[RMDB]
RNA sequence: GGGAACGACUCGAGUAGAGUCGAAAAUAGCUUUUGAACUCUAUGCUAAGCGUGCUGUACGCUCGCAUCCCGAUUUCAAAUUGCUACACAAUUUACAAGCAGACAUUUGCUACAAGUUCGUCCUUUGAAGCUAUGAUCUUCGGAUCAUAGAAAAGAAACAACAACAACAAC
Reactivity to DMS in 0.01 (KOAc 150mM, MgCl2 10mM, bicine 150mM(pH8.5), 24C), signal-to-noise 9, nucleotides 027 to 129: u020a030g000c010u040u020u010u010g000a030a030c040u020c000u000a040u030g000c030u010a060a100g040c030g000u000g070c280u080g060u090a050c030g040c000u000c300g040c010a000u030c140c130c160g010a000u000u000u000c010a030a040a040u000u000g010c010u020a030c230a100c160a070a050u050u060u100a100c180a080a090g040c080a070g040a090c110a100u060u020u030g030c010u020a060c110a080a050g000u030u000c050g030u010c060c000u000u010u010g000a150a080g020
Reactivity to 2A3 in 0.01 (KOAc 150mM, MgCl2 10mM, bicine 150mM(pH8.5), 24C), signal-to-noise 9, nucleotides 027 to 129: u030a000g000c000u010u010u000u000g000a000a000c010u000c010u030a010u010g000c020u080a110a050g000c000g050u070g070c170u270g160u190a000c010g000c000u010c020g000c000a020u040c070c100c040g010a010u010u000u000c010a020a030a030u120u090g000c010u060a030c080a010c010a140a110u120u170u210a110c080a100a040g050c020a020g070a070c100a190u100u110u110g010c010u050a080c020a080a020g020u070u070c010g020u040c030c000u100u090u210g100a080a010g030